[RMDB]
RNA sequence: GGGAACGACUCGAGUAGAGUCGAAAAUUGAUGUGAAUUCGUAAACUGUAAGCGGGUACGGAUCCGGCAUACUUAGUACAACGUUACCUGUUUGCAGAAUGUAAGCCAUAGGUAGGACGGGAUCAUAUGCCACAAGAUACGACUUAAGACUUGAGGGAGGCCAUGUAAGUUUCGACUUACAUGGCCUAAAAGAAACAACAACAACAAC
Reactivity to 2A3 in 0.01 (KOAc 150mM, MgCl2 10mM, bicine 150mM(pH8.5), 24C), signal-to-noise 1, nucleotides 027 to 156: u040u080g010a120u080g110u030g170a160a150u080u080c060g020u120a000a020a110c020u000g000u020a000a000g040c080g000g000g000u000a000c000g020g020a040u000c000c000g060g070c040a050u120a290c150u100u190a020g100u170a020c020a080a000c010g030u070u040a050c000c000u000g000u000u000u070g040c000a020g000a000a020u020g020u070a000a040g070c050c010a040u000a070g070g000u040a100g030g100a010c010g000g010g070a030u050c020a040u050a030u120g080c030c020a020c000a040a000g020a070u050a000c160g010a010c000u030u050a150a000g090a080c020u050u050g020a110g000g030g000